[RMDB]
RNA sequence: GGGAACGACUCGAGUAGAGUCGAAAAAUCACGGGGGCCAACACCGGACUUGGAUUCGAGACCGCCGCAGCGCUUGCCGCCCAUGGUGCACACGUGGUGCUGGCUGUGCGCAACCUCGACAAGGGCAUCACAGGGUAAGCUUCGGCUUACCCUGUGAAAAAGAAACAACAACAACAAC
Reactivity to 2A3 in 0.01 (KOAc 150mM, MgCl2 10mM, bicine 150mM(pH8.5), 24C), signal-to-noise 3, nucleotides 027 to 126: a000u080c060a060c060g000g000g000g000g000c060c020a070a020c000a070c050c020g000g010a030c030u070u080g040g050a090u130u050c030g040a040g020a100c000c020g030c000c000g050c060a020g020c040g030c040u040u110g030c030c010g010c000c010c000a020u030g030g030u190g060c150a050c010a000c110g030u040g000g050u100g010c040u070g040g000c030u060g040u050g050c000g030c030a040a010c000c010u000c000g000a010c010a050a010g010g010g060c030a020
Reactivity to DMS in 0.01 (KOAc 150mM, MgCl2 10mM, bicine 150mM(pH8.5), 24C), signal-to-noise 2, nucleotides 027 to 126: a050u060c040a040c010g010g010g020g050g010c030c020a070a090c040a070c080c050g000g000a070c050u010u020g000g000a140u000u010c060g000a120g010a090c060c030g000c000c090g020c060a090g040c060g020c010u000u000g000c010c010g020c000c000c000a040u000g000g000u000g040c240a070c160a070c020g000u030g010g010u000g010c030u040g020g010c060u000g020u060g000c030g000c040a030a070c100c000u010c000g040a020c020a080a070g000g000g030c090a200
An RNA of 177 nucleotides, treated with 2A3 and DMS and read out base by base. Reactivities are given for positions 27 through 126. High 2A3 reactivity points to a flexible backbone, as in loops and unpaired stretches. Conditions: 150 mM KOAc, 10 mM MgCl2 and 150 mM bicine (pH 8.5), 24 C.